[RMDB]
The record gives the reactivity of an RNA of 177 nucleotides to 2A3.
RNA sequence: GGGAACGACUCGAGUAGAGUCGAAAACUAAAGAUUCCAAUUUUUUAAACGAGUCCGGGGUUCUAUUGUAAAUGCCCGAAUAGAACCCUGUUCAAGUGGUUUGUCCACUGAUGUCGUCUUUAGGGCAGAUAUUGCGAAUGUUCGCAUUCGCAAUAUCAAAAGAAACAACAACAACAAC
Reactivity to 2A3 in 0.01 (KOAc 150mM, MgCl2 10mM, bicine 150mM(pH8.5), 24C), signal-to-noise 1, nucleotides 027 to 126: c010u050a160a030a090g060a030u060u120c010c050a040a080u020u080u020u090u240u300a140a260a020c020g000a010g000u060c080c000g020g000g000g000u000u010c000u000a000u000u080g060u030a000a210a110u010g000c000c000c000g000a000a000u000a000g000a000a000c000c000c000u000g000u000u020c030a030a050g000u000g070g040u100u230u300g050u000c010c000a000c000u030g020a020u030g060u060c070g040u000c040u060u070u120a020g010g000g000c000a000
Source information: For 2A3, 714 sequencing reads were counted. Source: RMDB library 15KREP, as collected in RNAgym. Values cover nucleotides 27 to 126.